[RMDB]
RNA sequence: GGGAACGACUCGAGUAGAGUCGAAAAGACAUAGUACCUGGUGAGUGCUCAAUACAUGGAAAACAAUUUUAUUACUAUUUCAUUAUUACGGAAGUAGUAAAAUUAAUUUUGUUGAGUAAACUUGUACCUUGGAUGUAUGGAGCAUGAUUGUCCAAAAUGGUUAAACUCAUUUCGAUGAGUUUAACCAAAAAGAAACAACAACAACAAC
Reactivity to 2A3 in 0.01 (KOAc 150mM, MgCl2 10mM, bicine 150mM(pH8.5), 24C), signal-to-noise 2, nucleotides 027 to 156: g050a020c010a030u100a010g020u030a050c010c010u010g020g000u030g000a050g000u020g000c000u010c000a020a000u020a030c040a030u060g120g020a080a050a000a000c020a010a000u010u000u050u080a070u030u000a000c000u030a050u030u000u000c000a000u010u300a150u100u140a050c160g000g000a000a000g010u020a000g010u010a000a020a000a060u100u060a000a010u000u050u020u020g010u010u020g010a010g000u040a010a000a130c020u020u090g050u060a040c030c030u040u130g070g010a010u000g000u010a020u050g020g010a000g020c000a010u050g010a130u030u110g010u010c010c060a010a110a020a070
Reactivity to DMS in 0.01 (KOAc 150mM, MgCl2 10mM, bicine 150mM(pH8.5), 24C), signal-to-noise 2, nucleotides 027 to 156: g020a160c060a100u020a180g020u000a110c020c000u000g010g000u010g020a210g010u000g030c000u000c010a050a060u000a050c030a030u010g010g010a130a160a080a070c030a010a020u020u030u000u000a130u030u010a070c000u000a080u000u010u000c000a070u010u010a190u000u000a090c140g010g010a060a010g020u000a010g010u000a010a020a050a100u000u000a030a030u000u000u000u000g000u000u010g010a120g000u000a040a030a090c090u000u010g010u000a050c000c070u000u010g040g010a060u000g010u000a060u000g000g000a090g010c030a040u000g020a180u010u000g030u000c010c020a030a030a110a190